An RNA of 177 nucleotides, treated with 2A3 and DMS and read out base by base.
RNA sequence: GGGAACGACUCGAGUAGAGUCGAAAAGAUAUGGACCUGAAAGCUUUUGACGAGAGAACGGGUCGGAAACGACCCAAUCUCGAUAAGCUUCAGGUCCUAAGUCAAAACUAGCCCUUCGGGGCUAGAACAAUACUGUCAUGUUCGCAUGACAGUAUUGAAAAGAAACAACAACAACAAC
Reactivity to 2A3 in 0.01 (KOAc 150mM, MgCl2 10mM, bicine 150mM(pH8.5), 24C), signal-to-noise 4, nucleotides 027 to 126: g020a000u050a020u110g000g000a000c010c010u030g090a220a100a030g030c020u090u200u300u300g300a220c100g010a010g000a000g020a260a070c170g010g000g000u000c010g020g010a030a050a000c000g000a000c020c030c000a000a010u000c000u000c000g000a010u020a010a000g010c000u010u000c000a000g010g000u000c000c000u000a000a000g000u000c000a000a000a030a070c000u000a000g000c000c010c000u020u040c300g050g010g000g000c010u000a000g000a000a010
Reactivity to DMS in 0.01 (KOAc 150mM, MgCl2 10mM, bicine 150mM(pH8.5), 24C), signal-to-noise 7, nucleotides 027 to 126: g010a020u000a210u010g010g000a010c000c000u000g000a030a040a070g010c010u000u000u010u010g020a210c200g010a050g010a010g020a120a160c300g010g000g030u000c010g010g000a030a040a120c000g010a010c000c000c000a030a060u000c000u000c000g010a090u010a010a010g010c000u000u000c000a010g010g000u000c000c000u000a000a060g000u000c010a150a100a130a220c010u000a010g000c000c000c000u000u010c260g030g010g010g010c000u000a000g010a060a200
The DMS profile rests on 12,891 reads.